[RMDB]
RNA sequence: GGGAACGACUCGAGUAGAGUCGAAAAUUGCAAGCCUUCGGGCUUGCAAGGUGUCGGAAUGCGCAAUAUAUAAUCCUCCGCUUAAGGAUUAUACCGACUUAAGUGCCAGGCUGUUCGCAGCCUGGAAUAUUCUACAAAAUUUCGAUUUUGUAGAAUAAAAAGAAACAACAACAACAAC
Reactivity to 2A3 in 0.01 (KOAc 150mM, MgCl2 10mM, bicine 150mM(pH8.5), 24C), signal-to-noise 2, nucleotides 027 to 126: u010u000g010c000a000a000g010c010c000u040u070c260g100g000g020c000u020u000g020c000a010a000g000g010u090g030u010c010g050g060a130a100u200g060c140g000c090a110a000u150a010u010a010u010a260a030u020c000c000u040c030c040g160c130u080u190a020a010g010g010a020u010u000a000u010a040c010c010g070a010c010u090u080a170a030g150u060g220c010c000a000g020g000c000u000g000u050u090c200g000c160a010g000c010c040u000g000g040a000a000
Reactivity to DMS in 0.01 (KOAc 150mM, MgCl2 10mM, bicine 150mM(pH8.5), 24C), signal-to-noise 3, nucleotides 027 to 126: u000u000g010c000a010a010g000c000c000u010u000c230g030g010g030c000u010u000g010c000a000a010g010g010u000g010u000c000g010g000a190a080u010g020c120g020c150a110a080u010a190u000a020u000a010a010u000c000c000u010c210c190g010c250u020u010a100a010g000g010a020u000u000a010u000a080c030c000g000a020c020u000u000a070a150g010u010g010c000c000a010g010g010c010u000g000u000u010c180g000c000a010g000c000c000u000g010g000a030a040